The record gives the reactivity of an RNA of 177 nucleotides to DMS and 2A3. It was measured as part of the RMDB library OK2TRN. The RNA was probed in 150 mM KOAc, 10 mM MgCl2 and 150 mM bicine (pH 8.5) at 24 C. For 2A3, 3,380 sequencing reads were counted.
RNA sequence: GGGAACGACUCGAGUAGAGUCGAAAACAUGGAUCAUCGUACGAUCCAGCGGAUCACUCGGAUCAUCUAGUGAUCUCUAGGCUAGACAUGAUGUCUAGUCUGUCACAUGGUACGUACAGCAGCCAUGCACAGAUAGCGGGUUCGCCCGCUAUCUGUGAAAAGAAACAACAACAACAAC
Reactivity to DMS in 0.01 (KOAc 150mM, MgCl2 10mM, bicine 150mM(pH8.5), 24C), signal-to-noise 4, nucleotides 027 to 126: c050a050u000g000g000a060u000c030a170u020c160g010u020a060c030g000a300u000c000c030a040g030c180g010g010a030u000c000a020c000u000c070g020g000a170u000c220a110u000c010u000a010g000u000g000a010u000c020u000c180u020a000g010g000c000u000a000g000a010c000a200u010g000a170u010g010u000c010u000a010g000u000c010u000g030u010c100a080c150a150u010g000g020u000a240c010g020u000a010c050a090g000c140a160g010c000c020a010u010g000
Reactivity to 2A3 in 0.01 (KOAc 150mM, MgCl2 10mM, bicine 150mM(pH8.5), 24C), signal-to-noise 3, nucleotides 027 to 126: c010a030u030g000g000a060u120c030a040u070c120g070u050a020c010g020a120u020c000c010a000g000c040g060g000a020u000c010a000c020u050c080g130g050a260u240c070a100u080c100u020a010g000u000g010a000u010c040u050c080u080a000g000g000c000u010a000g010a000c020a070u300g060a150u300g270u020c010u000a000g010u000c020u030g110u140c070a090c010a140u050g010g000u180a070c000g010u010a020c020a040g020c000a000g020c020c000a020u030g010